The record gives the reactivity of an RNA of 177 nucleotides to 2A3 and DMS. DMS adducts were read by reverse transcription with MarathonRT. It was measured as part of the RMDB library OK1LIB. Values cover nucleotides 27 to 126. DMS (dimethyl sulfate) methylates the pairing face of unpaired adenines and cytosines.
RNA sequence: GGGAACGACUCGAGUAGAGUCGAAAAGGUAUUUCAGCCUGAGCUGGAAGAAGAGGAAUUGGCUGCCGAGAUAGCCGAUAUGUACCUGCAUGGAAGAGCCUACUACUACUCAGGCAAACCACUGCCGUGCAGUCUUAAGGUUCGCCUUAAGACUGCAAAAAGAAACAACAACAACAAC
Reactivity to 2A3 in 0.01 (KOAc 150mM, MgCl2 10mM, bicine 150mM(pH8.5), 24C), signal-to-noise 6, nucleotides 027 to 126: g050g000u060a120u080u210u190c080a050g020c010c040u070g020a030g030c070u070g040g040a130a030g040a040a030g040a070g040g070a060a080u070u040g020g000c020u020g020c050c110g160a110g050a220u130a040g020c000c010g010a040u030a050u160g070u060a110c040c010u060g100c060a070u100g050g050a090a070g040a030g100c000c010u050a100c030u030a030c020u010a010c010u060c030a020g000g000c000a010a010a010c030c000a060c100u070g000c020c000g000
Reactivity to DMS in 0.01 (KOAc 150mM, MgCl2 10mM, bicine 150mM(pH8.5), 24C), signal-to-noise 3, nucleotides 027 to 126: g010g000u010a070u000u010u010c150a120g010c000c010u000g000a090g000c080u010g000g000a040a040g010a030a080g000a050g010g030a090a050u010u010g010g030c000u010g000c060c160g000a160g020a140u040a060g000c010c010g000a060u040a020u000g030u020a070c080c030u020g000c070a080u030g010g000a090a130g000a190g010c030c000u000a080c040u000a070c030u010a120c030u000c010a000g000g000c020a100a040a080c080c030a070c110u010g010c010c020g000